[RMDB]
RNA sequence: GGGAACGACUCGAGUAGAGUCGAAAAUUGCGCUGUUGCACAUCCUGUGGAAGGUGUUCCAGGCAUACACUGAAAUGGAUUCCUGGUCAGGCGUUCUUAAAAGUCUUAUGUAUGCUGCCAUCGCAGGCUUCAAUGCUUCUUUCGAGAAGCAUUGAAGAAAAGAAACAACAACAACAAC
Reactivity to 2A3 in 0.01 (KOAc 150mM, MgCl2 10mM, bicine 150mM(pH8.5), 24C), signal-to-noise 2, nucleotides 027 to 126: u110u080g030c060g020c060u120g110u280u210g000c060a030c000a070u040c010c030u070g000u020g210g070a100a030g010g020u010g030u080u060c040c000a000g010g000c000a000u050a030c000a000c030u080g000a030a080a110u130g050g000a040u040u030c000c000u090g000g270u140c140a000g040g020c050g040u000u010c000u070u160a160a160a050a020g000u010c010u060u110a100u100g020u000a030u040g000c000u060g000c020c010a030u050c050g000c010a010g000g010
Reactivity to DMS in 0.01 (KOAc 150mM, MgCl2 10mM, bicine 150mM(pH8.5), 24C), signal-to-noise 2, nucleotides 027 to 126: u010u010g010c050g020c050u000g000u010u010g030c030a060c110a130u010c020c010u000g020u010g020g020a060a040g020g020u000g000u010u000c020c030a270g000g000c020a010u000a040c020a030c090u000g000a040a080a070u010g010g010a060u000u010c020c000u000g020g020u010c240a050g010g000c060g000u000u010c010u000u000a060a070a100a110g010u000c060u000u000a100u000g000u000a030u000g010c030u000g000c040c030a060u010c040g000c070a050g000g000